[RMDB]
RNA sequence: GGGAACGACUCGAGUAGAGUCGAAAAGAAGGUAAGGAGUUGGCGGACGGAUGUGGCCGUGAACGUUGGAAGGCGCUUCCGUGUGAGCGGAAUUCUUUCAUACCAAGAACGGGAUAACCGGAAGAAAGGGAUUAUCAUACUUCGGUAUGAUAAUCCCAAAAGAAACAACAACAACAAC
Reactivity to 2A3 in 0.01 (KOAc 150mM, MgCl2 10mM, bicine 150mM(pH8.5), 24C), signal-to-noise 2, nucleotides 027 to 126: g020a010a020g020g000u090a010a040g070g000a110g000u020u030g020g010c010g060g030a030c010g000g020a050u040g040u120g090g050c000c000g020u020g020a090a020c210g020u100u000g060g010a090a000g000g000c010g010c230u000u000c000c000g080u080g050u080g050a040g020c020g010g020a030a030u050u000c000u060u000u060c020a090u100a070c050c000a000a040g020a040a050c000g020g000g000a060u120a140a070c040c020g010g070a040a020g030a090a070a060
Reactivity to DMS in 0.01 (KOAc 150mM, MgCl2 10mM, bicine 150mM(pH8.5), 24C), signal-to-noise 2, nucleotides 027 to 126: g000a190a030g020g010u050a010a090g020g080a160g020u040u010g020g030c020g020g000a120c050g000g020a030u000g000u000g010g010c000c050g000u000g000a040a100c160g030u020u000g000g010a050a140g020g030c170g030c100u000u000c000c010g000u000g000u020g000a180g010c000g000g030a080a080u000u010c000u010u000u060c100a040u000a150c030c060a090a080g010a050a120c020g000g020g000a070u030a070a190c070c020g010g000a040a140g000a110a090a090